[RMDB]
RNA sequence: GGGAACGACUCGAGUAGAGUCGAAAAACCGCAGGGUUCCAUUACGAACUAAGUUCGUUAAUGGAAUAUCAAGAGACACUUUAACGUGGUAAAACCCAUCGGAAACCACUGCCGUGCAGGUGUGAGGGUCGGACCACACAUUCGUGUGUGGUCCGACAAAAGAAACAACAACAACAAC
Reactivity to 2A3 in 0.01 (KOAc 150mM, MgCl2 10mM, bicine 150mM(pH8.5), 24C), signal-to-noise 1, nucleotides 027 to 126: a000c000c050g140c030a090g000g150g000u020u000c000c000a000u000u000a000c000g020a020a000c000u110a110a070g020u060u000c000g000u070u110a000a000u000g000g000a010a030u030a000u030c000a000a000g120a070g090a070c040a010c000u050u130u300a140a000c160g000u060g010g010u030a010a160a160a000c010c000c000a050u100c010g010g000a070a200a000c020c000a060c030u070g000c000c000g040u080g160c140a000g000g000u000g050u070g110a100g020g050
Structure probing data (2A3) for a 177-nucleotide construct. The 2A3 profile rests on 489 reads. The RNA was probed in 150 mM KOAc, 10 mM MgCl2 and 150 mM bicine (pH 8.5) at 24 C. Values are in units of 0.01, from 0 to 300, in steps of 10.